Structure probing data (2A3 and DMS) for a 177-nucleotide construct. Conditions: 150 mM KOAc, 10 mM MgCl2 and 150 mM bicine (pH 8.5), 24 C. The data come from the RNA Mapping Database (RMDB), library OK1LIB. Values cover nucleotides 27 to 126.
[RMDB]
RNA sequence: GGGAACGACUCGAGUAGAGUCGAAAAGAGCGAUACGUGAGACUACACGUGAAAAUGUGUAGUCGAUCUACUUUGAGCAUUGUAGAUCAGAAGUGCUCGAAUCAUCGAAAAGAUGAGCGUAUCGCGAGGGAAUUGAUUUGUUCGCAAAUCAAUUCCCAAAAGAAACAACAACAACAAC
Reactivity to 2A3 in 0.01 (KOAc 150mM, MgCl2 10mM, bicine 150mM(pH8.5), 24C), signal-to-noise 3, nucleotides 027 to 126: g150a020g000c000g000a010u000a010c000g020u040g070a050g000a020c000u000a000c000a000c010g050u060g070a000a060a010a050u070g000u000g000u000a000g000u010c000g010a000u000c000u020a090c040u070u020u060g000a010g000c010a040u020u060g130u230a120g020a220u150c110a030g120a260a000g090u030g020c000u000c010g010a010a010u000c000a000u000c010g060a120a000a220a020g010a000u000g000a010g010c000g000u000a000u000c000g000c000g010a060
Reactivity to DMS in 0.01 (KOAc 150mM, MgCl2 10mM, bicine 150mM(pH8.5), 24C), signal-to-noise 2, nucleotides 027 to 126: g010a300g030c000g010a000u000a000c000g000u000g000a220g030a040c000u000a000c000a000c010g000u020g000a110a010a060a000u010g030u010g020u000a000g020u000c000g000a100u030c180u030a050c060u000u000u000g000a000g010c010a040u020u000g000u010a040g020a210u050c190a070g000a050a060g020u020g000c000u000c000g010a030a040u000c000a010u000c000g010a110a030a100a140g000a000u000g030a030g010c000g000u000a000u040c000g000c000g000a080